[RMDB]
An RNA of 177 nucleotides, treated with 2A3 and read out base by base.
For 2A3, 274 sequencing reads were counted.
Values cover nucleotides 27 to 126.
The data come from the RNA Mapping Database (RMDB), library OK1LIB.

RNA sequence: GGGAACGACUCGAGUAGAGUCGAAAAACAGCAGCUCCUUCAUGCGAGAACAGCUUUUAUGCUUAAUGGCAGUUAUUUAGUGCAAUUCACUGUAAAAUUGUUGCCAUAGGAGAAUCUGCCACUCGCCGGCUGCAUGCGGCUUCGGCCGCAUGCAGCCAAAAGAAACAACAACAACAAC
Reactivity to 2A3 in 0.01 (KOAc 150mM, MgCl2 10mM, bicine 150mM(pH8.5), 24C), signal-to-noise 1, nucleotides 027 to 126: a000c000a010g110c070a000g040c000u020c000c000u060u060c150a170u130g060c000g020a000g040a100a060c000a020g000c000u150u100u000u110a190u300g110c000u070u000a060a000u040g000g010c000a000g000u070u070a090u000u090u040a000g040u110g100c080a080a020u000u130c070a020c110u100g080u300a120a140a000a000u170u000g040u020u000g040c040c000a090u010a040g050g060a000g010a000a040u000c040u000g040c180c000a060c030u000c000g000c010c000